[RMDB]
RNA sequence: GGGAACGACUCGAGUAGAGUCGAAAAGAUAUGGACUCCCUUUGGACAUGGAGGCGGGUCGGAAACGACCUACCUCCAACAGCCAAACAUGGGAGUCCUAAGUCAAAGCGCUUGUUCGCAAGCGCAACUUAUGUCCAUCGUUCGCGAUGGACAUAAGAAAAGAAACAACAACAACAAC
Reactivity to DMS in 0.01 (KOAc 150mM, MgCl2 10mM, bicine 150mM(pH8.5), 24C), signal-to-noise 3, nucleotides 027 to 126: g000a050u000a300u000g000g000a020c010u010c010c000c010u000u010u000g010g010a080c070a300u000g000g000a020g030g040c010g010g000g010u020c000g010g010a060a080a260c000g010a020c000c000u000a050c000c000u000c000c000a000a040c250a190g000c010c000a010a070a120c300a110u010g000g000g000a030g020u000c000c010u000a010a050g010u010c030a130a120a090g000c000g030c000u000u000g000u000u030c260g010c030a000a010g030c000g030c000a010a040
Reactivity to 2A3 in 0.01 (KOAc 150mM, MgCl2 10mM, bicine 150mM(pH8.5), 24C), signal-to-noise 2, nucleotides 027 to 126: g000a020u090a040u190g000g000a010c000u010c010c000c000u000u010u030g060g000a100c110a150u240g000g010a000g000g010c060g020g030g000u000c000g000g000a060a080a030c000g000a010c010c000u000a000c000c000u000c010c000a000a010c020a010g020c000c000a010a020a030c230a160u250g000g010g020a000g000u010c000c000u000a010a000g010u000c060a120a100a070g000c000g000c020u040u050g040u130u250c300g000c170a000a000g000c000g030c000a000a040

The record gives the reactivity of an RNA of 177 nucleotides to DMS and 2A3. Values are in units of 0.01, from 0 to 300, in steps of 10. Conditions: 150 mM KOAc, 10 mM MgCl2 and 150 mM bicine (pH 8.5), 24 C. 2A3 adducts were read by reverse transcription with SuperScript II with manganese. For 2A3, 4,059 sequencing reads were counted. It was measured as part of the RMDB library TTRDES.